[RMDB]
RNA sequence: GGGAACGACUCGAGUAGAGUCGAAAAUUGCGCCUCCGAUUCGCCGUCGGCAUUUCCCCAGCAGCCAUGACCUACCAGGCUGCGGUGCGGCUCGACGCACAGGUCAUCCCUCAUCGGGCGCGUCCUGGAUAGGGCUAUACUUUCGAGUAUAGCCCAACUUUAGGUCUAUCUUCGGAUAGACCUAAAGAAAAGAAACAACAACAACAAC
Reactivity to DMS in 0.01 (KOAc 150mM, MgCl2 10mM, bicine 150mM(pH8.5), 24C), signal-to-noise 1, nucleotides 027 to 156: u000u000g010c000g000c000c010u000c030c010g000a170u010u000c060g000c070c080g010u000c030g010g050c060a220u000u000u000c030c000c010c030a070g010c030a030g000c040c010a130u000g000a090c080c110u000a170c070c050a160g010g020c010u000g010c000g010g040u000g000c080g010g010c140u000c030g010a050c000g010c030a100c040a100g020g010u000c040a190u010c000c000c010u000c020a110u000c040g000g010g030c040g000c020g000u020c020c030u000g000g010a140u000a110g030g030g060c030u000a000u000a000c020u000u000u000c190g010a070g040u000a000u000a010g010c030c000c000a000a000
Reactivity to 2A3 in 0.01 (KOAc 150mM, MgCl2 10mM, bicine 150mM(pH8.5), 24C), signal-to-noise 2, nucleotides 027 to 156: u100u040g000c010g020c000c030u150c020c040g020a040u110u100c080g020c110c030g080u030c000g010g080c050a050u110u110u090c010c030c020c000a010g000c000a000g000c010c010a110u080g050a220c000c070u120a150c080c110a030g000g010c000u000g000c010g000g000u050g000c030g020g020c020u030c100g040a030c010g030c010a030c010a000g000g030u130c080a210u160c040c000c020u060c030a030u050c050g030g000g010c010g010c000g010u020c000c040u040g030g020a080u060a150g030g000g050c000u020a020u000a020c000u080u100u160c260g110a000g010u010a030u000a010g020c040c000c000a000a000